[RMDB]
RNA sequence: GGGAACGACUCGAGUAGAGUCGAAAAGCGCUAGGCCGCAGGCGCUGCGCGAUCCGAUCGACGACGUCUGGAUCCGCUGGCCGGCCGGCCCUGGCCGAUCGAUCGAUCGUACAGAGCGCGAGGCCAGUCGUCACAACUAUUUCGAUAGUUGUGACGAAAAAGAAACAACAACAACAAC
Reactivity to 2A3 in 0.01 (KOAc 150mM, MgCl2 10mM, bicine 150mM(pH8.5), 24C), signal-to-noise 3, nucleotides 027 to 126: g040c040g010c060u080a090g000g000c030c000g060c080a050g060g010c140g000c120u050g010c010g000c070g000a000u000c040c030g010a050u070c040g090a090c030g040a050c080g030u010c070u170g040g010a050u000c000c020g000c020u010g030g020c030c000g010g000c080c020g000g000c000c010c000u000g010g000c020c010g010a090u000c010g070a150u090c120g000a000u010c010g000u030a020c020a040g040a020g010c020g010c020g010a060g010g070c020c000a000g080
Reactivity to DMS in 0.01 (KOAc 150mM, MgCl2 10mM, bicine 150mM(pH8.5), 24C), signal-to-noise 6, nucleotides 027 to 126: g010c030g020c020u000a120g020g020c020c020g020c110a140g010g010c000g000c030u000g000c030g020c080g010a030u000c050c030g010a040u000c040g010a070c110g010a120c210g010u000c020u010g020g010a060u000c020c030g020c020u000g000g010c030c010g000g030c150c030g010g000c070c080c020u000g000g010c040c010g010a050u000c000g000a130u010c140g010a010u000c000g010u000a040c060a030g000a080g000c010g000c010g020a150g010g010c010c010a110g010
The record gives the reactivity of an RNA of 177 nucleotides to 2A3 and DMS. The DMS profile rests on 10,918 reads. High DMS reactivity at an A or C suggests that its Watson-Crick edge is free. 2A3 adducts were read by reverse transcription with SuperScript II with manganese. Conditions: 150 mM KOAc, 10 mM MgCl2 and 150 mM bicine (pH 8.5), 24 C.